The record gives the reactivity of an RNA of 177 nucleotides to DMS and 2A3. Reactivities are rounded to 0.1 and cut off at 0 and 3. The RNA was probed in 150 mM KOAc, 10 mM MgCl2 and 150 mM bicine (pH 8.5) at 24 C. 2A3 adducts were read by reverse transcription with SuperScript II with manganese. It was measured as part of the RMDB library OK2TRN.
RNA sequence: GGGAACGACUCGAGUAGAGUCGAAAAAGAAGGUCUCAAUAUGCUGCCCAGGCUGGCCUUGGACUCCUGGGCUCUAGCGAUCCUCCUGCCUUAGCCUCCUGAGUAGCUAGUUUAGAUUUGAUGUAAACGAAGAGUUGAAUUUCGAUUCAACUCUUCGAAAAGAAACAACAACAACAAC
Reactivity to DMS in 0.01 (KOAc 150mM, MgCl2 10mM, bicine 150mM(pH8.5), 24C), signal-to-noise 4, nucleotides 027 to 126: a070g010a110a060g010g000u000c050u010c060a080a120u000a090u000g000c080u010g020c020c000c000a070g000g020c190u000g000g000c030c070u000u000g020g000a060c030u000c010c010u010g010g000g020c020u000c040u000a020g010c110g010a080u000c030c020u000c030c010u000g000c010c020u000u010a090g010c040c020u000c020c010u000g010a060g010u000a070g010c040u010a070g010u000u010u000a080g010a130u000u010u010g010a130u010g010u000a050a070a180
Reactivity to 2A3 in 0.01 (KOAc 150mM, MgCl2 10mM, bicine 150mM(pH8.5), 24C), signal-to-noise 1, nucleotides 027 to 126: a020g080a030a040g060g010u020c000u000c090a020a090u210a080u150g000c050u020g000c030c020c000a010g030g000c140u020g020g040c030c010u050u060g060g050a020c010u000c000c020u000g020g010g000c000u020c030u050a000g000c010g060a040u030c000c000u000c010c010u050g040c000c000u040u110a060g030c020c050u050c010c010u040g020a040g000u080a000g010c020u040a020g050u060u090u040a070g010a110u070u080u170g090a100u170g030u180a020a070a000